[RMDB]
RNA sequence: GGGAACGACUCGAGUAGAGUCGAAAACUAUAGAACCAUCAGCUUUGGUGUCGUAACGAACGCCGCCUGCCUCAGAAGACUUCAGCUGCGAAACGUUAACCGCAUCGGUGGCAUUAACACCUGCAGCCAGCAGUUACUAGUUCGCUAGUAACUGCUGAAAAGAAACAACAACAACAAC
Reactivity to DMS in 0.01 (KOAc 150mM, MgCl2 10mM, bicine 150mM(pH8.5), 24C), signal-to-noise 4, nucleotides 027 to 126: c070u000a090u000a100g010a090a090c030c020a060u000c070a050g030c070u000u010u000g020g040u010g020u000c040g000u010a050a090c170g010a100a090c070g010c020c050g000c040c010u010g010c050c030u000c060a040g010a110a070g010a080c100u000u000c090a090g030c020u000g020c010g000a040a060a050c110g000u000u000a040a100c060c070g000c040a110u000c170g030g020u000g010g020c120a080u000u000a060a050c050a080c070c070u010g010c060a030g000c050
Reactivity to 2A3 in 0.01 (KOAc 150mM, MgCl2 10mM, bicine 150mM(pH8.5), 24C), signal-to-noise 3, nucleotides 027 to 126: c040u070a040u040a280g060a070a040c030c020a020u090c030a020g040c000u140u100u160g020g010u030g030u000c020g030u060a130a040c070g040a040a020c010g000c010c010g000c000c000u020g020c000c020u080c040a110g020a230a010g040a120c000u090u020c090a040g030c000u040g000c050g000a030a100a000c020g010u020u030a020a020c040c030g000c030a060u150c080g100g000u020g010g000c030a060u040u070a020a020c030a020c030c030u050g010c020a000g030c020

An RNA of 177 nucleotides, treated with DMS and 2A3 and read out base by base. The data come from the RNA Mapping Database (RMDB), library OK2TST. The 2A3 profile rests on 3,945 reads.